Overview: This 177-nucleotide RNA was probed chemically with DMS. Conditions: 150 mM KOAc, 10 mM MgCl2 and 150 mM bicine (pH 8.5), 24 C. For DMS, 3,500 sequencing reads were counted.
RNA sequence: GGGAACGACUCGAGUAGAGUCGAAAAGAUAUGGACAGGGAAAGUCCCACCAGGACAGACAUGCUUGGUCAUCGGAAACGAUGGCUGAGCAACAGCUGUCUGGUGGGACUUUCCCUGUCCUAAGUCACGAUUACAUAAUCUUCGGAUUAUGUAAUCGAAAAGAAACAACAACAACAAC
Reactivity to DMS in 0.01 (KOAc 150mM, MgCl2 10mM, bicine 150mM(pH8.5), 24C), signal-to-noise 3, nucleotides 027 to 126: g010a050u000a300u010g000g010a000c010a020g000g020g010a020a000a020g020u000c010c000c000a010c000c000a050g010g020a050c010a000g000a030c100a300u000g010c010u000u000g010g010u000c000a010u000c000g000g010a180a130a230c020g020a010u000g000g010c010u000g000a000g010c000a000a020c210a180g000c000u000g000u010c000u000g000g000u000g000g010g000a000c000u000u010u000c000c000c020u010g010u000c000c000u000a000a040g010u010c040a300